Chemical mapping of a 207-nucleotide RNA with DMS and 2A3. The reactions ran in a buffer of 150 mM KOAc, 10 mM MgCl2 and 150 mM bicine (pH 8.5), at 24 C.
RNA sequence: GGGAACGACUCGAGUAGAGUCGAAAAAUACAUACUGACACCGGUUGCUCAACAGGCUGUGUGGGACAAUAGAAUAACCAGGCUGUCAAUUUGAGCUUGACGGCUGCAAACCGAAUGGAGUGAAAUCGUAACCGGACUCACUUCGGUGAGUCCGGAACAUUAAAUUACGAUUCGUCGUAAUUUAAUGAAAAGAAACAACAACAACAAC
Reactivity to DMS in 0.01 (KOAc 150mM, MgCl2 10mM, bicine 150mM(pH8.5), 24C), signal-to-noise 3, nucleotides 027 to 156: a100u010a060c050a110u000a110c070u000g010a120c050a040c030c000g000g060u000u000g010c030u000c050a080a100c070a080g000g020c020u000g030u010g030u000g020g010g010a110c060a060a070u010a110g000a140a110u000a050a080c050c020a300g010g020c010u000g000u000c040a040a050u000u010u010g010a130g030c240u000u000g010a060c000g030g020c020u000g030c070a070a060a090c020c000g020a050a190u010g010g010a110g020u000g010a050a080a100u010c070g020u000a100a130c020c010g010g000a030c010u000c010a020c010u000u000c300g020g040u000g000a020g030u000c010c000g010g000a000a010
Reactivity to 2A3 in 0.01 (KOAc 150mM, MgCl2 10mM, bicine 150mM(pH8.5), 24C), signal-to-noise 4, nucleotides 027 to 156: a010u160a020c030a020u120a050c020u090g070a030c020a020c040c020g030g040u020u060g010c020u020c050a040a060c030a080g040g000c030u020g030u030g020u050g080g020g020a010c050a100a120u110a180g100a110a090u090a110a010c010c010a010g040g010c010u010g000u030c000a030a040u070u060u150g020a010g020c000u010u030g040a030c000g000g010c020u030g000c040a050a090a070c040c030g060a070a050u120g060g020a030g040u090g040a060a050a070u090c070g030u050a060a070c000c000g000g000a000c000u000c000a000c010u030u040c100g050g000u000g000a000g000u000c000c010g000g000a000a000